[RMDB]
RNA sequence: GGGAACGACUCGAGUAGAGUCGAAAAAAGGAUACUCUUUCUUAUCACUCUCCAUUGUUUUCUUGAUAAGAUGAACAAAGGGUCCUAUUCAUAUAGCGUAUUGUUAUUUACGAGUAUUCAGCAUUUAAUUAUAAAGCACAAUUCAAAUGGAAGCACAUAGCGUCACUAAUUUCGAUUAGUGACGCUAAAAAGAAACAACAACAACAAC
Reactivity to 2A3 in 0.01 (KOAc 150mM, MgCl2 10mM, bicine 150mM(pH8.5), 24C), signal-to-noise 3, nucleotides 027 to 156: a000a020g100g000a070u130a120c020u010c000u040u050u040c000u000u020a030u040c020a050c040u120c030u020c070c060a130u100u080g110u110u100u090u090c060u080u040g010a010u010a030a030g010a010u070g070a050a040c040a070a020a020g020g010g010u020c010c000u050a100u050u100c030a020u070a010u050a240g040c020g040u110a020u080u120g050u060u080a050u100u080u020a040c020g010a010g010u040a050u050u030c040a020g000c000a010u060u070u100a070a060u110u150a070u140a160a030a000g030c020a020c040a050a080u090u100c040a030a080a060u090g040g020a000a040g030c040a010c020a090
Reactivity to DMS in 0.01 (KOAc 150mM, MgCl2 10mM, bicine 150mM(pH8.5), 24C), signal-to-noise 2, nucleotides 027 to 156: a070a060g020g020a070u000a040c010u020c020u010u000u010c010u000u000a050u010c020a050c150u000c040u000c050c050a220u000u000g020u010u000u010u010c020u020u050g010a070u010a030a030g010a080u000g050a050a110c080a090a090a100g000g000g040u000c010c040u030a160u000u010c060a130u000a100u000a060g030c100g040u000a120u010u000g010u000u000a090u000u000u010a050c050g010a070g010u010a100u010u000c010a120g000c040a060u010u000u010a050a080u010u000a110u000a060a020a140g020c050a060c040a050a080u000u000c130a050a030a080u000g010g000a020a080g000c010a060c060a150